[RMDB]
RNA sequence: GGGAACGACUCGAGUAGAGUCGAAAAAAAAUCGGCCAGAAGAAAAGUGAAGCGGGCUCUCUGUUGUACCCAUGCGGGUUGGCCAUUCUUUUCUACUUUGAUUCUCACAUAUCACAGUUUCUAUGAACACCUCAAGAUCCUCUGAAAUGUUAAAGACUCAAUACCCAUAAUUCGUUAUGGGUAUUGAAAAAGAAACAACAACAACAAC
Reactivity to 2A3 in 0.01 (KOAc 150mM, MgCl2 10mM, bicine 150mM(pH8.5), 24C), signal-to-noise 1, nucleotides 027 to 156: a040a020a050a030u060c000g030g000c020c000a000g000a080a000g010a000a190a030a020g050u040g080a000a000g050c030g070g010g010c070u030c030u000c000u080g110u100u080g020u110a030c000c000c000a000u070g030c140g000g000g030u050u000g020g030c010c000a040u090u030c040u050u000u020u030c050u060a090c000u090u070u000g030a050u070u030c020u010c030a050c010a050u150a030u070c020a030c010a070g010u010u050u030c030u040a130u090g080a060a030c040a060c050c000u060c020a030a000g050a040u010c010c030u080c020u050g050a200a080a030u120g050u070u240a110a180a010g030a080c240
Reactivity to DMS in 0.01 (KOAc 150mM, MgCl2 10mM, bicine 150mM(pH8.5), 24C), signal-to-noise 1, nucleotides 027 to 156: a020a120a100a100u020c090g030g000c040c020a100g000a080a150g000a110a070a140a140g000u000g040a020a070g040c090g020g010g000c080u000c060u020c080u000g010u010u000g010u010a120c020c010c000a180u000g060c090g000g020g000u000u000g010g030c030c080a170u000u000c020u000u010u010u000c070u000a080c040u020u000u000g020a070u010u010c010u020c040a120c070a160u010a080u000c010a040c070a090g010u000u000u020c030u000a130u020g000a120a020c030a040c020c110u020c020a050a110g010a070u000c020c020u000c060u000g020a060a070a090u010g020u000u020a060a090a070g010a190c110